[RMDB]
RNA sequence: GGGAACGACUCGAGUAGAGUCGAAAAUAAUAAUAGGAUUCAGGAGAAACAUACAUGUAACGCGCGAAGCUUUGUCUUUUUUUUCCCUUCCUGAUUCUGAAACGACUAACGGUUGCGCGCUAAAUAAGAUGAUAAUCUUGUUCGCAAGAUUAUCAUCAAAAGAAACAACAACAACAAC
Reactivity to DMS in 0.01 (KOAc 150mM, MgCl2 10mM, bicine 150mM(pH8.5), 24C), signal-to-noise 5, nucleotides 027 to 126: u000a090a100u010a110a140u010a150g010g000a020u000u000c010a010g000g010a130g010a120a130a100c180a100u000a080c200a090u020g000u000a090a090c100g010c020g000c010g000a080a100g000c040u000u000u000g010u000c010u000u000u000u000u000u000u000u000c010c000c010u010u000c010c000u000g000a020u000u000c010u000g000a050a040a040c200g010a030c040u010a060a080c120g010g010u000u000g000c020g000c000g000c010u000a050a050a080u010a080a110
Reactivity to 2A3 in 0.01 (KOAc 150mM, MgCl2 10mM, bicine 150mM(pH8.5), 24C), signal-to-noise 3, nucleotides 027 to 126: u030a000a030u110a050a060u080a090g030g000a000u020u040c000a010g000g020a020g090a070a190a030c060a080u260a060c030a040u160g070u230a090a030c050g000c010g000c010g040a010a000g020c020u060u090u060g010u030c030u100u060u020u030u010u000u010u010c000c000c000u030u020c010c000u000g000a000u030u000c010u030g070a030a080a030c070g030a000c010u060a100a010c110g050g010u020u050g000c000g000c000g000c000u020a040a080a060u150a080a040